[RMDB]
RNA sequence: GGGAACGACUCGAGUAGAGUCGAAAAGGUGGAAACAACUGAAGCUUCAACGCCUUUUUUUCCUAUCUUCUUUAGCACCGGGCUAGGGAGUAAGCCCGUGGAACCUUAGUUUUGUUCCCUCGGGACUUACUUGUGGUUCCUGUGGUGCACUCCUGACGUGGUAUAGGGAGUUCGCUCCCUAUACCACAAAAGAAACAACAACAACAAC
Reactivity to 2A3 in 0.01 (KOAc 150mM, MgCl2 10mM, bicine 150mM(pH8.5), 24C), signal-to-noise 4, nucleotides 027 to 156: g040g000u020g010g060a070a070a050c080a080a020c130u210g110a150a030g080c070u140u070c110a120a100c050g000c020c000u020u010u000u000u000u020u050c060c000u060a160u080c070u180u020c010u050u100u110a010g010c010a040c100c110g100g070g010c020u000a020g080g030g030a000g000u040a020a010g000c000c000c000g020u020g000g000a000a000c000c020u060u060a080g030u070u150u120u250g060u050u040c020c020c010u070c080g080g000g080a130c000u000u010a000c000u020u050g070u090g040g000u110u170c010c040u080g140u190g030g010u020g030c040a000c030u060c000c040u050g050a060c100

An RNA of 207 nucleotides, treated with 2A3 and read out base by base. Source: RMDB library VIROID, as collected in RNAgym.